[RMDB]
RNA sequence: GGGAACGACUCGAGUAGAGUCGAAAACAGCUGCACGUGAGGUCCCCAGGCCACCCAUACUUGUGUCCAGCUUGACUACAAAUUUGGAGCUUCCCACAACGCCCCCACUGAUGUGUGUCACCCGGCACAUCAACGUCUUCACCAAUCAGGAAGCUUAAUCAUCCUCAUUAUUCGUAAUGAGGAUGAUAAAAGAAACAACAACAACAAC
Reactivity to DMS in 0.01 (KOAc 150mM, MgCl2 10mM, bicine 150mM(pH8.5), 24C), signal-to-noise 3, nucleotides 027 to 156: c050a120g010c030u010g020c030a100c090g020u020g010a080g020g020u000c030c000c000c020a100g000g010c050c010a070c030c000c010a090u000a070c060u010u010g020u000g010u000c030c040a110g030c060u000u010g000a170c040u000a170c040a030a040a100u000u000u000g030g010a060g010c040u010u000c010c000c010a080c060a090a100c040g020c040c000c000c010c000a110c050u010g000a030u000g000u000g030u000g010u000c020a090c040c020c000g000g000c010a020c000a010u000c010a040a060c060g010u000c010u000u010c020a110c030c040a050a100u010c080a070g000g000a050a060g030c010u000u000a080
Reactivity to 2A3 in 0.01 (KOAc 150mM, MgCl2 10mM, bicine 150mM(pH8.5), 24C), signal-to-noise 3, nucleotides 027 to 156: c010a020g020c040u050g020c020a020c050g090u070g050a090g020g020u090c020c030c020c020a030g020g010c020c010a050c000c030c010a050u080a200c070u060u090g020u020g040u080c040c030a020g030c070u060u050g080a090c020u050a040c160a030a180a210u120u050u120g100g000a030g010c020u020u000c000c040c010a060c070a090a140c110g120c010c000c010c000c000a010c020u010g010a000u000g010u010g000u000g050u060c020a060c000c000c000g010g000c000a000c000a000u000c000a000a020c040g010u010c020u020u050c060a080c080c020a020a130u130c010a000g060g000a040a010g040c000u090u120a100